Record summary
Chemical mapping of a 177-nucleotide RNA with DMS and 2A3. DMS adducts were read by reverse transcription with MarathonRT. The DMS profile rests on 2,911 reads. The 2A3 profile rests on 6,117 reads.
[RMDB]
RNA sequence: GGGAACGACUCGAGUAGAGUCGAAAAGAUAUGGAUGCAUUCAGAUGGGAGCGUUUGGUUCGGAAACGAACCUUACGCGAAGAACAUCUGAGAUGCAUCCUAAGUCAAACCCCAGUUCGCUGGGGAACUCAACAAAUCUGUUCGCAGAUUUGUUGAGAAAAGAAACAACAACAACAAC
Reactivity to DMS in 0.01 (KOAc 150mM, MgCl2 10mM, bicine 150mM(pH8.5), 24C), signal-to-noise 2, nucleotides 027 to 126: g010a060u000a300u000g000g000a000u010g010c000a020u000u010c000a000g000a010u010g020g000g010a150g020c010g030u000u000u000g000g010u000u000c010g000g000a120a090a210c010g000a020a010c010c000u000u000a010c010g030c000g000a040a150g000a130a180c000a000u010c010u000g010a040g000a010u000g000c010a000u010c000c000u000a000a080g040u020c030a050a120a230c010c000c000c010a010g020u000u010c260g020c000u000g020g000g000g000a020a030
Reactivity to 2A3 in 0.01 (KOAc 150mM, MgCl2 10mM, bicine 150mM(pH8.5), 24C), signal-to-noise 2, nucleotides 027 to 126: g040a010u090a040u200g030g000a000u010g000c000a000u000u050c000a000g010a010u000g050g020g070a060g030c010g000u000u010u020g010g010u010u010c000g000g030a050a080a080c000g010a000a000c000c000u000u000a000c010g010c000g000a030a000g000a030a010c000a020u000c010u000g020a070g010a010u000g010c000a000u010c000c000u000a020a010g000u010c020a030a070a300c000c000c000c000a000g010u100u100c280g000c130u030g000g000g000g030a020a020